An RNA of 177 nucleotides, treated with DMS and 2A3 and read out base by base. The data come from the RNA Mapping Database (RMDB), library OK2TRN. For DMS the reverse transcriptase was MarathonRT. For 2A3, 1,674 sequencing reads were counted. For DMS, 1,389 sequencing reads were counted. Conditions: 150 mM KOAc, 10 mM MgCl2 and 150 mM bicine (pH 8.5), 24 C.

[RMDB]
RNA sequence: GGGAACGACUCGAGUAGAGUCGAAAACACAGGCUCAGGGCUCCACGAGGCUGGCACAGCUCCAUCCUACCACGUAGUUAGAGGGGAUAUAGCCACGGCCACCGAGAGUGUCAUAGUGAACGCAGCCCACCCUCCUCAAGUUCGCUUGAGGAGGGUGAAAAGAAACAACAACAACAAC
Reactivity to DMS in 0.01 (KOAc 150mM, MgCl2 10mM, bicine 150mM(pH8.5), 24C), signal-to-noise 3, nucleotides 027 to 126: c030a110c130a120g000g010c020u020c050a210g000g020g030c030u000c050c070a090c090g020a170g010g030c210u000g010g000c030a070c090a130g000c040u000c100c080a040u020c050c030u030a100c020c030a070c140g020u030a130g010u010u020a080g010a110g020g000g000g000a080u010a110u000a040g010c010c010a130c200g010g030c000c000a030c030c010g000a170g000a120g000u000g000u010c030a080u010a060g000u000g020a040a040c140g010c150a120g000c030c040
Reactivity to 2A3 in 0.01 (KOAc 150mM, MgCl2 10mM, bicine 150mM(pH8.5), 24C), signal-to-noise 2, nucleotides 027 to 126: c030a010c020a020g000g030c000u040c060a030g020g070g020c020u000c030c000a110c120g040a020g000g000c090u000g040g040c030a000c000a060g020c010u000c040c010a120u070c030c000u050a260c000c030a120c100g110u090a050g100u100u210a060g020a100g040g000g000g040a010u020a020u050a120g000c040c010a070c110g020g010c000c010a000c010c030g000a040g000a000g040u070g050u050c050a060u050a070g130u100g060a020a000c040g030c080a000g030c020c010